An RNA of 177 nucleotides, treated with 2A3 and DMS and read out base by base. The reactions ran in a buffer of 150 mM KOAc, 10 mM MgCl2 and 150 mM bicine (pH 8.5), at 24 C. Values cover nucleotides 27 to 126.
[RMDB]
RNA sequence: GGGAACGACUCGAGUAGAGUCGAAAAUGGCAAAGUGCCGAACGUACGCAAUCCUCUUUACCGAAUCGGACGAUCCCGACCAUUUCAUCUUCUUCGAAACGUUCCAGCGCGUCACUUAAUCCGGAGCCAGAUCUGUUCUAUUCGUAGAACAGAUCUGAAAAGAAACAACAACAACAAC
Reactivity to 2A3 in 0.01 (KOAc 150mM, MgCl2 10mM, bicine 150mM(pH8.5), 24C), signal-to-noise 9, nucleotides 027 to 126: u060g020g000c040a080a060a090g110u120g100c020c010g020a050a020c040g040u160a020c050g010c070a040a120u080c010c020u050c030u060u080u090a080c030c030g050a090a060u070c020g020g010a020c030g040a060u050c000c010c010g030a070c010c030a050u010u030u050c020a050u000c000u070u000c000u080u060c030g030a040a060a050c010g020u020u010c010c000a030g020c030g000c020g060u030c010a030c070u050u090a050a040u050c020c030g030g010a010g040c010
Reactivity to DMS in 0.01 (KOAc 150mM, MgCl2 10mM, bicine 150mM(pH8.5), 24C), signal-to-noise 7, nucleotides 027 to 126: u010g000g020c050a100a090a110g030u010g010c030c020g000a070a090c100g020u000a050c100g010c090a090a080u010c040c030u000c050u010u010u010a080c080c040g020a120a070u020c050g010g000a070c060g000a080u010c030c010c010g020a110c030c030a050u010u000u000c050a060u000c030u010u000c030u010u000c040g010a040a090a150c040g000u000u010c010c010a070g000c060g010c040g010u000c040a030c060u000u000a050a080u020c040c030g000g010a110g020c120